[RMDB]
RNA sequence: GGGAACGACUCGAGUAGAGUCGAAAAUUUUGAUUCAAGGGUUCAAUACUUUUCUACCCCAAGGCUAUAGAAUCGAAUGCUCCUCUAAUCCGGACGACCCCAUUAGAGUUACUACACCAAUGGGUACCACUGGUCCCGUAUUCGUACGGGACCAGUGAAAAGAAACAACAACAACAAC
Reactivity to 2A3 in 0.01 (KOAc 150mM, MgCl2 10mM, bicine 150mM(pH8.5), 24C), signal-to-noise 3, nucleotides 027 to 126: u060u070u020u130g040a000u050u010c030a090a120g080g020g080u110u070c020a080a100u120a300c040u190u230u100u040c020u100a080c000c000c000c010a050a100g090g000c040u040a020u060a300g030a020a030u010c030g020a040a030u070g000c020u010c000c030u000c020u050a040a120u050c050c050g000g030a040c010g020a000c000c050c000c000a000u030u030a080g110a010g060u030u070a130c060u040a020c140a020c030c000a010a030u020g000g030g000u080a050c050
Reactivity to DMS in 0.01 (KOAc 150mM, MgCl2 10mM, bicine 150mM(pH8.5), 24C), signal-to-noise 1, nucleotides 027 to 126: u110u040u000u000g040a000u000u000c070a000a180g000g000g000u000u020c080a010a130u030a160c040u020u000u050u000c090u000a030c050c000c000c140a050a300g000g080c170u030a170u000a130g020a020a030u000c000g000a000a000u050g000c160u020c080c010u000c110u000a070a130u000c100c040g000g000a120c090g000a070c210c010c000c000a000u000u000a140g000a160g000u010u000a070c160u000a060c260a010c130c050a000a050u000g020g030g000u020a080c130